This 177-nucleotide RNA was probed chemically with DMS and 2A3. The RNA was probed in 150 mM KOAc, 10 mM MgCl2 and 150 mM bicine (pH 8.5) at 24 C. 2A3 adducts were read by reverse transcription with SuperScript II with manganese. Values cover nucleotides 27 to 126. The 2A3 profile rests on 4,659 reads.

RNA sequence: GGGAACGACUCGAGUAGAGUCGAAAAACAACUGCUACAGAUCAUCUAGUGUUGACGAGUCCUUCAUCGAUAGAUAUUAUGGUUACUUGCGUAAACAUUUUUCUAUGAUGAUAUUGUCAGAUGACGGCGUAUAGUUAGCGUUCGCGCUAACUAUACGAAAAGAAACAACAACAACAAC
Reactivity to DMS in 0.01 (KOAc 150mM, MgCl2 10mM, bicine 150mM(pH8.5), 24C), signal-to-noise 3, nucleotides 027 to 126: a060c060a060a070c100u010g010c030u000a030c100a110g000a140u000c030a010u000c010u000a020g010u010g010u010u000g010a050c060g010a100g020u010c150c190u010u000c010a000u000c010g010a000u000a010g000a040u000a010u000u000a000u000g010g010u010u000a000c000u000u010g010c300g010u000a010a020a000c000a010u000u000u000u000u000c000u000a010u010g000a020u000g000a020u000a070u000u000g000u000c020a060g000a040u010g000a020c020g000g000
Reactivity to 2A3 in 0.01 (KOAc 150mM, MgCl2 10mM, bicine 150mM(pH8.5), 24C), signal-to-noise 4, nucleotides 027 to 126: a010c030a000a030c070u110g030c010u060a040c020a060g020a300u020c000a010u000c010u030a020g020u070g080u200u170g020a020c050g050a030g130u120c050c000u030u010c000a000u000c020g180a020u000a010g020a000u120a020u220u040a000u030g010g020u010u010a010c030u100u260g120c080g100u010a000a020a010c000a010u010u020u000u010u000c010u000a010u020g010a010u010g020a010u030a070u080u070g040u010c020a000g010a020u020g010a030c010g050g030